[RMDB]
RNA sequence: GGGAACGACUCGAGUAGAGUCGAAAAGAUGAGUAUGGAGGACACCAGGACAGUAUUGUGAUACAUAAUAUUUCCUCUCAUGAGGAUUGACUAUCACAGCCUCUCCUGGAAAGACAGAAAAUCUAAACAAUUUAUAGCAUUCUCAUUGCUACCUGGCCCUAAAAGCUAGGUUCGCCUAGCUUUUAGGAAAAGAAACAACAACAACAAC
Reactivity to DMS in 0.01 (KOAc 150mM, MgCl2 10mM, bicine 150mM(pH8.5), 24C), signal-to-noise 2, nucleotides 027 to 156: g030a040u010g020a100g020u010a110u000g020g000a210g030g000a120c100a100c030c000a030g010g030a050c110a020g050u000a010u010u020g030u030g000a050u000a020c050a110u000a110a150u020a130u000u000u000c010c020u000c020u000c180a180u000g020a020g030g060a030u010u020g010a140c140u000a030u000c000a020c010a060g010c190c000u000c060u000c010c000u000g010g020a030a120a110g010a090c030a080g000a120a070a170a250u000c020u000a090a070a120c080a090a160u010u000u000a110u000a110g010c010a090u000u010c000u000c040a140u010u000g030c030u000a070c040c030u010g010g060c220
Reactivity to 2A3 in 0.01 (KOAc 150mM, MgCl2 10mM, bicine 150mM(pH8.5), 24C), signal-to-noise 5, nucleotides 027 to 156: g020a000u010g000a000g010u030a000u020g030g060a070g110g060a040c030a050c060c000a020g000g010a000c010a010g050u100a220u150u030g000u000g000a000u010a020c030a020u260a220a060u130a270u140u110u050c000c010u000c000u050c110a090u300g000a000g000g010a000u000u050g020a010c030u010a000u010c000a000c000a000g010c000c000u000c000u000c010c000u010g000g010a060a000a000g040a000c010a000g070a020a040a000a000u020c010u070a050a060a000c050a080a100u130u300u210a140u120a030g030c000a010u110u010c060u010c070a030u030u060g000c010u030a080c000c030u020g070g000c000